RNA sequence: GGGAACGACUCGAGUAGAGUCGAAAACGUAGCCAGGCUCUUCCACAUUAACGGCUAUGACCCAGAACAGGCAGCUUGGUACCUAGCUAAUUGGGCCAAGGGGGGACAUCAAAAGAGGAGAGCCCUCUCUAGCCAGACAAUUCGUUGUCUGGCUAGAAAAAGAAACAACAACAACAAC
Reactivity to 2A3 in 0.01 (KOAc 150mM, MgCl2 10mM, bicine 150mM(pH8.5), 24C), signal-to-noise 1, nucleotides 027 to 126: c020g010u000a010g000c000c050a020g030g050c000u030c020u100u050c060c000a210c000a270u180u080a170a000c090g030g080c000u000a000u040g080a080c000c000c000a040g110a010a040c060a060g100g130c060a060g000c060u010u000g030g010u300a300c000c010u090a110g000c000u110a190a010u160u090g000g010g010c010c000a020a000g000g040g000g000g000g000a060c030a060u090c120a020a060a120a000g020a000g000g010a020g020a010g050c000c010c000u040c010
Reactivity to DMS in 0.01 (KOAc 150mM, MgCl2 10mM, bicine 150mM(pH8.5), 24C), signal-to-noise 1, nucleotides 027 to 126: c050g060u020a000g000c000c020a170g010g000c030u040c040u000u000c060c040a170c160a100u010u000a120a080c140g000g070c020u000a020u020g000a120c020c000c040a160g000a070a240c150a090g020g000c080a110g040c060u000u000g000g000u000a120c030c000u000a020g000c140u000a070a160u000u000g050g020g000c000c000a040a010g010g000g000g010g000g010a170c220a020u000c090a030a070a110a180g000a090g020g000a130g000a120g000c050c000c120u020c080
Chemical mapping of a 177-nucleotide RNA with 2A3 and DMS. Conditions: 150 mM KOAc, 10 mM MgCl2 and 150 mM bicine (pH 8.5), 24 C. For 2A3, 589 sequencing reads were counted. For DMS, 621 sequencing reads were counted.